The record gives the reactivity of an RNA of 177 nucleotides to 2A3. The RNA was probed in 150 mM KOAc, 10 mM MgCl2 and 150 mM bicine (pH 8.5) at 24 C. Reactivities are given for positions 27 through 126. 2A3 adducts were read by reverse transcription with SuperScript II with manganese. It was measured as part of the RMDB library OK1LIB. As a SHAPE reagent, 2A3 marks flexible, mostly unpaired nucleotides at the ribose 2'-OH. Values are in units of 0.01, from 0 to 300, in steps of 10.

RNA sequence: GGGAACGACUCGAGUAGAGUCGAAAAACGCGACUGGGAAACGUCGAAGACGCCCUCCUCACAGAAGACGUCACAGAACUCGGCGAUUCCCUGUGACUCGACUGCGGGCAGUUGCUCGUCGACGACGGAGCUCAGGGGCUUUCGAGCCCCUGAGCUCAAAAGAAACAACAACAACAAC
Reactivity to 2A3 in 0.01 (KOAc 150mM, MgCl2 10mM, bicine 150mM(pH8.5), 24C), signal-to-noise 1, nucleotides 027 to 126: a000c090g040c010g150a010c020u010g000g010g010a010a000a000c000g000u020c020g020a060a050g040a040c000g060c010c000c000u000c010c000u100c020a100c000a030g050a070a000g000a020c000g000u010c010a080c040a160g130a110a050c000u060c070g020g000c040g050a080u100u110c040c000c000u010g030u000g000a000c010u040c000g010a060c000u040g010c050g010g000g000c020a000g040u240u170g060c040u000c000g010u030c000g010a000c040g040a010c100g060